The data come from the RNA Mapping Database (RMDB), library PDB130. Structure probing data (2A3 and DMS) for a 207-nucleotide construct.

RNA sequence: GGGAACGACUCGAGUAGAGUCGAAAACCCUAACUGAUUAGUUCGCUAAUCAGUUAGGGAAAAGCUGGGAUGUUGGCUUAGAAGCAGCCAUCAUUUAAAGAGUGCGUAACAGCUCACCAGCAAAAGUCUGGAGGCGAGUUUCGACUCGCCUCCAGACCAUAUUGAUCAACUUCGGUUGAUCAAUAUGAAAAGAAACAACAACAACAAC
Reactivity to 2A3 in 0.01 (KOAc 150mM, MgCl2 10mM, bicine 150mM(pH8.5), 24C), signal-to-noise 1, nucleotides 027 to 156: c000c010c000u000a000a000c000u000g000a000u010u000a000g020u050u060c200g000c140u000a010a000u000c000a000g000u000u000a000g000g000g000a000a020a000a030g000c000u000g000g010g000a010u000g000u030u040g000g000c000u000u000a000g000a000a010g000c000a000g010c000c000a000u000c000a010u020u010u000a000a000a000g000a000g000u010g000c010g000u010a000a000c000a000g000c000u000c000a000c000c010a000g000c010a050a010a000a000g000u000c000u000g030g000a000g080g030c060g050a020g000u080u140u180c160g230a100c000u000c060g000c000c000u000c000c000a010g000a000c000
Reactivity to DMS in 0.01 (KOAc 150mM, MgCl2 10mM, bicine 150mM(pH8.5), 24C), signal-to-noise 2, nucleotides 027 to 156: c010c000c000u000a000a000c010u000g000a000u010u000a000g020u000u010c300g030c020u000a010a010u000c000a010g010u000u000a010g010g010g000a010a010a020a170g010c020u000g000g000g010a020u000g010u000u000g000g000c010u000u000a300g020a220a210g010c210a110g020c000c000a010u010c010a030u000u000u000a080a050a160g000a160g020u010g000c020g010u000a180a150c110a220g020c000u000c010a040c010c000a030g000c000a090a080a090a090g010u000c000u020g010g020a040g020g020c010g050a060g060u010u000u000c290g010a090c000u000c020g050c040c000u000c000c000a000g000a000c020

For 2A3 the reverse transcriptase was SuperScript II with manganese.